[RMDB]
RNA sequence: GGGAACGACUCGAGUAGAGUCGAAAAUGUACAUCUACUGAUGGUUGAUUAUCUACUGCUGUUGAAUAGAUUUGAGAUUUAGAUGUAGGAAUCGUAGUGUUACGUUCAAUUAACGUAUUCAUACGUCUAUGAUUCUUAGCUUCGGCUAAGAAUCAUAAAAAGAAACAACAACAACAAC
Reactivity to 2A3 in 0.01 (KOAc 150mM, MgCl2 10mM, bicine 150mM(pH8.5), 24C), signal-to-noise 3, nucleotides 027 to 126: u070g010u010a010c000a070u020c000u030a050c040u090g140a140u200g080g020u050u030g010a050u030u020a010u040c010u030a050c050u080g180c050u080g090u300u040g070a090a080u020a040g010a030u010u030u080g070a050g000a030u070u140u130a020g010a010u010g010u040a000g050g050a050a040u080c020g020u010a040g080u000g030u130u030a010c020g000u010u050c080a120a130u170u140a070a000c000g000u010a030u060u010c020a040u020a030c020g000u000c020
Reactivity to DMS in 0.01 (KOAc 150mM, MgCl2 10mM, bicine 150mM(pH8.5), 24C), signal-to-noise 5, nucleotides 027 to 126: u010g010u000a030c060a020u000c010u000a060c300u010g010a140u000g010g000u000u000g000a230u000u000a020u000c020u000a030c080u000g020c070u000g020u000u000g020a100a090u000a020g010a030u000u000u000g010a300g000a050u000u000u010a010g000a040u000g000u000a020g000g010a080a080u000c020g020u000a020g010u000g010u000u010a010c020g000u010u000c210a090a110u000u000a020a020c000g010u010a030u000u000c040a070u010a010c020g010u000c140